Conditions: 150 mM KOAc, 10 mM MgCl2 and 150 mM bicine (pH 8.5), 24 C. This 177-nucleotide RNA was probed chemically with 2A3 and DMS. 2A3 adducts were read by reverse transcription with SuperScript II with manganese. DMS (dimethyl sulfate) methylates the pairing face of unpaired adenines and cytosines. The DMS profile rests on 3,836 reads. Source: RMDB library OK2TST, as collected in RNAgym. For 2A3, 1,022 sequencing reads were counted.

[RMDB]
RNA sequence: GGGAACGACUCGAGUAGAGUCGAAAAGUCGAGAAGUCCAUUCCUAAACAAAUUACCCAAUUGUUAUCGGCUUCCAGUGACCAGUUUUUAAUUGCGGUUCUUACUGAUGACUACUUUAAUAACCUCAAAUGGGAAAGUAUUUCGAUACUUUCCCAUUAAAAGAAACAACAACAACAAC
Reactivity to 2A3 in 0.01 (KOAc 150mM, MgCl2 10mM, bicine 150mM(pH8.5), 24C), signal-to-noise 1, nucleotides 027 to 126: g030u020c030g000a020g020a110a050g020u060c060c010a050u050u050c000c030u080a050a030a030c030a030a000a060u150u140a180c010c020c000a030a100u060u050g000u040u040a070u110c020g000g000c000u040u000c020c040a040g040u000g060a050c000c000a010g000u000u050u000u030u270a120a110u150u110g030c030g000g020u020u000c030u060u100a020c000u010g100a080u040g000a060c030u080a000c000u040u100u020a040a100u180a090a080c030c000u010c020a040
Reactivity to DMS in 0.01 (KOAc 150mM, MgCl2 10mM, bicine 150mM(pH8.5), 24C), signal-to-noise 4, nucleotides 027 to 126: g020u010c050g010a150g010a060a060g020u000c020c070a130u000u010c040c030u000a080a050a050c050a040a030a090u000u010a170c070c040c040a150a090u010u000g010u000u000a100u000c170g000g000c020u000u000c040c040a110g020u010g010a080c050c070a090g000u010u020u000u000u000a030a130u010u000g020c110g010g010u000u000c140u000u000a030c040u000g000a080u000g000a070c090u010a100c100u000u000u000a050a050u000a080a070c050c050u000c080a050